[RMDB]
RNA sequence: GGGAACGACUCGAGUAGAGUCGAAAAGCUAGGGGAUACCACGUACAGUGUUGUACCGACUUGCGAGACCCUUCCAGAGAGAACUCUCAAGUACUUUAGUUGCUGCAUCAAACCGUUCAAACUCAGGUGAGUCAGGAGUGAUCUUACCCUCACGAGCACAACCUAGGAUAUUCGUAUCCUAGGUUGUAAAAGAAACAACAACAACAAC
Reactivity to DMS in 0.01 (KOAc 150mM, MgCl2 10mM, bicine 150mM(pH8.5), 24C), signal-to-noise 4, nucleotides 027 to 156: g050c040u010a080g020g010g020g020a190u010a090c060c030a080c070g010u020a080c080a110g020u000g020u010u000g040u000a070c030c030g020a050c050u010u010g010c030g010a120g000a250c010c000c020u010u000c040c050a160g020a180g010a110g010a080a130c030u000c020u000c030a050a080g030u000a030c060u010u000u000a070g010u000u000g000c010u000g000c030a120u000c060a070a070a080c040c040g000u000u000c050a090a060a100c040u000c040a090g020g010u010g010a090g010u010c040a070g040g000a100g000u010g000a100u000c040u000u000a130c020c020c020u000c030a060c070g000a100g020c130
Reactivity to 2A3 in 0.01 (KOAc 150mM, MgCl2 10mM, bicine 150mM(pH8.5), 24C), signal-to-noise 3, nucleotides 027 to 156: g020c030u040a020g030g000g000g010a070u060a090c030c030a040c050g070u180a080c090a160g040u050g030u190u080g010u030a050c040c000g100a130c020u010u030g010c020g020a050g060a100c000c010c000u040u030c090c040a070g050a000g000a000g040a200a040c030u020c020u020c050a060a010g020u030a110c050u080u130u150a050g030u080u090g040c050u040g000c020a050u030c050a130a090a050c020c030g060u120u100c070a090a050a050c050u030c030a020g040g140u020g040a020g030u020c030a040g030g050a040g000u050g040a060u060c060u100u090a110c010c000c000u050c020a050c030g070a020g020c090